[RMDB]
RNA sequence: GGGAACGACUCGAGUAGAGUCGAAAAUGUGUCCAUUAUAACAUUACGUAGGAUUUGCUUUUUCACUUCAAGAUCUAUUUGUGGGUUAACCAUAUCGGUCAGCCAAGGCACGCCAAGUCGUGUAUCAUCGAACGCCUCGCCUAAUAUGAUUUGUAGGAAGCAGUGAGUUAUUCGUAACUCACUGCUUAAAAGAAACAACAACAACAAC
Reactivity to DMS in 0.01 (KOAc 150mM, MgCl2 10mM, bicine 150mM(pH8.5), 24C), signal-to-noise 1, nucleotides 027 to 156: u000g040u000g030u000c020c040a090u000u000a070u000a130a130c020a060u000u000a120c060g010u000a120g030g010a110u000u000u000g000c050u000u000u000u000u000c050a120c010u000u020c050a070a140g000a060u000c040u000a090u000u000u010g010u040g010g030g010u010u000a040a070c010c010a120u000a110u000c120g030g000u000c030a050g000c030c060a090a160g030g050c000a020c040g080c060c060a120a050g030u010c050g010u000g020u010a070u010c060a070u000c070g010a070a090c070g020c010c010u010c030g020c040c010u000a030a080u000a030u000g000a090u010u000u010g000u010a120g030g010
Reactivity to 2A3 in 0.01 (KOAc 150mM, MgCl2 10mM, bicine 150mM(pH8.5), 24C), signal-to-noise 3, nucleotides 027 to 156: u120g090u010g030u010c020c010a050u120u180a060u080a100a060c060a050u070u160a110c140g040u090a090g020g070a090u080u030u110g030c040u100u020u000u050u070c090a060c010u070u020c040a060a050g020a200u000c030u050a100u090u090u160g040u110g030g000g020u060u090a030a040c020c000a020u020a050u180c060g010g000u010c020a000g000c000c010a030a020g080g020c030a010c020g000c020c030a100a010g050u150c030g000u010g010u070a060u110c040a060u040c040g010a050a020c010g000c010c040u000c010g000c000c010u050a080a080u090a070u180g080a120u030u050u160g060u030a000g040g060
The record gives the reactivity of an RNA of 207 nucleotides to DMS and 2A3. It was measured as part of the RMDB library OK3TST. Conditions: 150 mM KOAc, 10 mM MgCl2 and 150 mM bicine (pH 8.5), 24 C.